[RMDB]
RNA sequence: GGGAACGACUCGAGUAGAGUCGAAAAUAUUUGAAGGUUCAUUGUCAUCACUGUGUUAGGAGCAGACAAUAGUAGGGCCAGGUUAGAAGGAAGAAGCCUAUUCCUGCCACGAGCCUGUUGCUGUAGUUGAAGUGGAAUGUGAUAGGGGCCUCUACUGGUCAUAUGCACGGUUCGCCGUGCAUAUGACAAAAGAAACAACAACAACAAC
Reactivity to 2A3 in 0.01 (KOAc 150mM, MgCl2 10mM, bicine 150mM(pH8.5), 24C), signal-to-noise 1, nucleotides 027 to 156: u170a010u040u120u110g100a080a040g000g000u000u000c010a020u050u100g000u040c000a000u070c010a040c050u080g000u000g090u170u110a090g120g000a030g010c000a020g050a140c020a080a020u040a030g050u020a030g010g000g000c010c090a000g070g000u070u110a000g020a300a020g070g000a060a030g000a060a030g080c000c000u080a110u110u050c000c010u000g030c000c020a060c050g000a050g020c030c030u010g000u000u000g040c060u080g020u140a110g000u010u040g060a110a000g010u020g020g020a090a120u120g010u000g000a010u000a150g000g050g000g000c030c040u060c040u040a040c050u000g050